[RMDB]
RNA sequence: GGGAACGACUCGAGUAGAGUCGAAAAAGACUCCACGUCGAUUUAUCGAGUAAAAUUCUGUAUACAUAUUGAUAAUGACAAUAUGUACAUUUGUCUUGACUAAUUACGUGCCAGCAGUCGCGGCAAUACGUAAGAGACUAGUGUUAAUCAUCAUAAACAGGUGAGUAUUGUUCGCAAUACUCACCUGAAAAGAAACAACAACAACAAC
Reactivity to 2A3 in 0.01 (KOAc 150mM, MgCl2 10mM, bicine 150mM(pH8.5), 24C), signal-to-noise 4, nucleotides 027 to 156: a000g020a010c020u000c040c000a030c030g210u090c030g000a020u050u150u140a160u110c020g000a020g060u090a010a090a120a170u130u070c090u100g150u140a070u030a100c020a000u020a010u050u000g030a040u070a300a090u070g020a000c000a000a000u000a000u010g000u010a000c000a040u020u030u100g000u010c010u020u090g070a150c060u120a140a100u060u010a010c000g010u020g000c000c070a080g010c070a120g140u270c140g010c020g020g040c020a020a060u160a090c010g010u020a030a000g000a000g000a010c010u030a010g000u010g020u060u140a070a040u180c100a030u000c010a020u050a000a130a010
Reactivity to DMS in 0.01 (KOAc 150mM, MgCl2 10mM, bicine 150mM(pH8.5), 24C), signal-to-noise 1, nucleotides 027 to 156: a240g050a100c000u000c000c000a070c070g020u000c060g040a080u000u030u000a050u010c040g010a020g060u010a050a040a090a120u030u000c140u000g030u010a120u000a010c000a010u010a010u000u000g000a070u000a140a140u000g000a160c010a010a010u000a000u000g010u010a020c010a050u000u000u000g000u010c010u010u000g000a090c010u000a080a060u000u010a010c030g000u000g020c100c070a100g000c050a120g030u000c040g000c070g000g000c000a140a080u000a160c030g020u000a080a050g000a080g010a050c040u000a040g050u010g040u000u000a090a090u020c030a000u010c020a060u000a060a100a130

Annotation
Source: RMDB library PDB130, as collected in RNAgym. The record gives the reactivity of an RNA of 207 nucleotides to 2A3 and DMS. For DMS the reverse transcriptase was MarathonRT. Conditions: 150 mM KOAc, 10 mM MgCl2 and 150 mM bicine (pH 8.5), 24 C.